[RMDB]
This 177-nucleotide RNA was probed chemically with DMS and 2A3.
For DMS, 1,997 sequencing reads were counted.
RNA sequence: GGGAACGACUCGAGUAGAGUCGAAAAGUGGAUUUGUUCGCAAAUCCACAAAUCCCAACAAGCCUGGCUGCCAGCCUAACAACCGAGCUACGCGGCGUAGCAAAAGGUUACACUUCGGUGUAACCAACCUUAUUUUAGCGUUCGCGCUAAAAUAAGGAAAAGAAACAACAACAACAAC
Reactivity to DMS in 0.01 (KOAc 150mM, MgCl2 10mM, bicine 150mM(pH8.5), 24C), signal-to-noise 3, nucleotides 027 to 126: g030u000g000g010a030u000u000u010g010u000u010c210g040c010a010a010a010u000c000c000a010c010a030a090a150u000c000c000c000a120a100c180a110a090g000c080c060u000g010g020c060u000g000c040c060a100g010c030c040u000a050a030c080a040a030c070c040g000a110g010c020u000a030c050g000c040g010g010c070g000u000a010g000c030a150a060a080a060g010g000u000u000a000c000a000c000u000u000c170g030g000u000g010u000a000a000c000c010a040a020
Reactivity to 2A3 in 0.01 (KOAc 150mM, MgCl2 10mM, bicine 150mM(pH8.5), 24C), signal-to-noise 2, nucleotides 027 to 126: g000u000g010g000a000u000u000u000g020u030u040c050g010c120a010a000a000u000c000c010a000c000a000a010a000u000c010c000c000a000a040c020a010a010g090c010c040u050g050g010c020u070g040c010c040a020g010c000c020u030a040a040c040a020a020c030c030g060a030g030c000u030a010c030g040c050g220g010c050g050u010a000g000c000a030a070a000a060g000g000u000u000a000c000a000c000u040u100c220g140g000u000g000u010a000a000c000c000a000a020